Structure probing data (2A3 and DMS) for a 177-nucleotide construct. The reactions ran in a buffer of 150 mM KOAc, 10 mM MgCl2 and 150 mM bicine (pH 8.5), at 24 C. For DMS the reverse transcriptase was MarathonRT. DMS (dimethyl sulfate) methylates the pairing face of unpaired adenines and cytosines. For 2A3, 67,945 sequencing reads were counted.
[RMDB]
RNA sequence: GGGAACGACUCGAGUAGAGUCGAAAAGCCACUUACGGACACUCCGUCUGACGUACAGUGUCACUCGCAUGACUAGUCAAAGUCAUGACUGUGAGCGAGUACCACUGAUGGUCAGUUCGAGUGUGGAAUACUAUAUCCGAUUCGUCGGAUAUAGUAUAAAAGAAACAACAACAACAAC
Reactivity to 2A3 in 0.01 (KOAc 150mM, MgCl2 10mM, bicine 150mM(pH8.5), 24C), signal-to-noise 9, nucleotides 027 to 126: g050c010c010a070c070u140u190a060c080g190g030a000c000a000c010u030c030c070g060u010c010u010g000a000c010g070u220a030c020a010g000u000g010u020c030a000c010u000c000g010c020a100u180g060a150c040u120a030g010u020c010a060a130a070g200u150c060a150u080g010a010c000u020g000u020g050a020g000c000g000a000g000u000a010c010c010a000c000u020g010a050u110g070g000u000c000a000g010u050u070c010g000a010g010u010g000u020g010g070a060
Reactivity to DMS in 0.01 (KOAc 150mM, MgCl2 10mM, bicine 150mM(pH8.5), 24C), signal-to-noise 9, nucleotides 027 to 126: g010c010c010a120c230u000u010a130c170g010g000a060c020a040c010u000c020c100g010u000c010u000g000a020c020g040u010a040c000a010g010u000g010u000c070a020c000u000c010g010c000a050u000g010a100c020u010a020g010u000c040a030a140a150g020u010c250a090u000g000a020c010u000g000u000g000a100g000c010g000a030g010u000a120c110c010a010c020u000g020a040u010g010g000u000c010a010g000u000u000c180g000a040g010u000g010u000g010g000a150